RNA sequence: GGGAACGACUCGAGUAGAGUCGAAAAGCCGGGGCAACUCGGCUAUGUCGGUAGACUGUCGCGUGGAAUAAACACUUCGGACCCGGGGGGCAGUACCCCGGCGCCUCCACCACCAGCCGCAGGCCGAACAUAGAUGGCCAUUCGUGGCCAUCUAUGUAAAAGAAACAACAACAACAAC
Reactivity to 2A3 in 0.01 (KOAc 150mM, MgCl2 10mM, bicine 150mM(pH8.5), 24C), signal-to-noise 2, nucleotides 027 to 126: g000c020c000g000g010g000g060c030a040a090c060u000c020g000g000c000u000a020u020g040u010c020g020g010u010a060g030a210c000u030g000u060c030g020c040g080u030g020g050a080a030u090a150a170a030c070a030c130u180u110c140g040g000a060c000c000c000g010g000g000g000g000g020c030a020g050u150a100c020c000c010c000g000g030c000g000c000c060u070c020c000a060c000c000a020c040c050a010g000c010c010g000c000a000g020g000c000c000g000a010
Reactivity to DMS in 0.01 (KOAc 150mM, MgCl2 10mM, bicine 150mM(pH8.5), 24C), signal-to-noise 2, nucleotides 027 to 126: g010c010c000g000g020g000g000c250a070a130c000u000c000g020g020c000u000a010u010g000u000c040g020g000u000a140g000a170c040u000g020u000c300g000c080g030u000g000g010a170a070u040a080a090a100c200a100c150u000u010c130g000g010a090c090c000c010g010g000g010g010g000g010c120a130g020u020a070c000c000c000c000g000g000c270g000c080c030u000c000c020a130c000c000a070c050c110a100g000c080c010g000c010a020g010g050c040c010g010a050
The data come from the RNA Mapping Database (RMDB), library RFM100. The record gives the reactivity of an RNA of 177 nucleotides to 2A3 and DMS. For DMS the reverse transcriptase was MarathonRT. The reactions ran in a buffer of 150 mM KOAc, 10 mM MgCl2 and 150 mM bicine (pH 8.5), at 24 C.